[RMDB]
RNA sequence: GGGAACGACUCGAGUAGAGUCGAAAAUGGCGGCGAGAGCGUAUUUCACACUAUCCCGUGUCAACUUGUGCAUGAGGACGGGCUUGAUGACGAGUUUUGCAAUAUUUUGAUUAUUGACGAGGAAGGAAGGGAGUCAUUUUACGCUAAGAAAUACACAAUCUGGUGAUCAAUUCGUUGAUCACCAGAUAAAAGAAACAACAACAACAAC
Reactivity to DMS in 0.01 (KOAc 150mM, MgCl2 10mM, bicine 150mM(pH8.5), 24C), signal-to-noise 2, nucleotides 027 to 156: u000g040g020c030g050g020c060g020a050g020a080g080c010g040u000a090u000u000u000c080a100c050a070c070u000a180u000c010c020c010g050u010g000u000c040a090a190c040u010u000g000u000g030c060a090u010g010a100g010g040a080c030g020g010g030c010u010u010g040a100u020g010a060c050g020a120g000u000u020u010u000g020c020a060a120u010a090u000u000u000u000g000a200u010u000a100u010u000g000a070c050g010a040g000g010a090a120g020g000a090a080g000g010g010a120g000u040c020a090u020u000u010u000a070c050g020c020u000a090a130g000a040a020a070u000a090c020a020c030a100
Reactivity to 2A3 in 0.01 (KOAc 150mM, MgCl2 10mM, bicine 150mM(pH8.5), 24C), signal-to-noise 4, nucleotides 027 to 156: u050g030g010c020g000g030c060g030a020g010a000g020c000g010u030a060u010u170u110c120a090c010a030c070u080a080u070c020c000c000g040u060g040u080c060a100a100c060u080u080g020u080g080c040a050u050g040a030g040g030a030c050g020g000g060c020u060u060g040a070u060g030a040c030g050a040g080u010u020u190u080g050c030a060a000u020a070u100u130u070u110g120a070u030u200a040u040u120g030a030c050g000a020g010g020a030a030g000g020a000a050g020g000g000a030g020u000c010a000u010u050u090u180a050c030g000c010u020a080a000g080a070a100a010u120a030c120a010c020a110
Conditions: 150 mM KOAc, 10 mM MgCl2 and 150 mM bicine (pH 8.5), 24 C. The record gives the reactivity of an RNA of 207 nucleotides to DMS and 2A3. 2A3 adducts were read by reverse transcription with SuperScript II with manganese. It was measured as part of the RMDB library OK3TST. For DMS, 3,261 sequencing reads were counted. The 2A3 profile rests on 2,625 reads.